[RMDB]
RNA sequence: GGGAACGACUCGAGUAGAGUCGAAAAGAGGAUUCAACGAGCUUCGUAGCAACGAUAGCAACGUAGCUUUUGCUACGACCCGAGCUAUCGAGGGGAGCUACGUCCCCUGCUCGAGGGUAGAAUCCGAAUAGUCAUAGUGGUUCGCCACUAUGACUAUAAAAGAAACAACAACAACAAC
Reactivity to DMS in 0.01 (KOAc 150mM, MgCl2 10mM, bicine 150mM(pH8.5), 24C), signal-to-noise 6, nucleotides 027 to 126: g020a200g010g000a020u000u010c010a170a100c040g010a040g000c010u000u000c030g000u010a090g030c090a050a070c050g010a010u000a010g000c010a110a190c020g010u000a000g000c000u000u010u010u010g030c000u000a010c010g010a080c070c040c070g010a140g010c010u000a010u000c030g000a050g000g000g000g000a040g000c090u010a070c300g000u000c000c000c000c000u000g020c000u000c000g000a030g000g010g020u010a070g000a020a000u000c000c000g010a130
Reactivity to 2A3 in 0.01 (KOAc 150mM, MgCl2 10mM, bicine 150mM(pH8.5), 24C), signal-to-noise 5, nucleotides 027 to 126: g150a030g010g000a020u010u020c030a050a030c050g020a010g030c010u060u040c060g220u210a040g010c060a020a020c020g020a030u010a010g000c010a050a040c010g000u010a000g000c010u110u220u180u300g000c000u010a000c000g020a020c000c030c000g020a020g010c010u010a000u040c000g000a030g010g000g000g000a020g040c130u140a060c030g140u040c000c000c000c000u010g000c010u000c000g010a060g030g000g020u110a090g000a000a000u000c000c000g000a020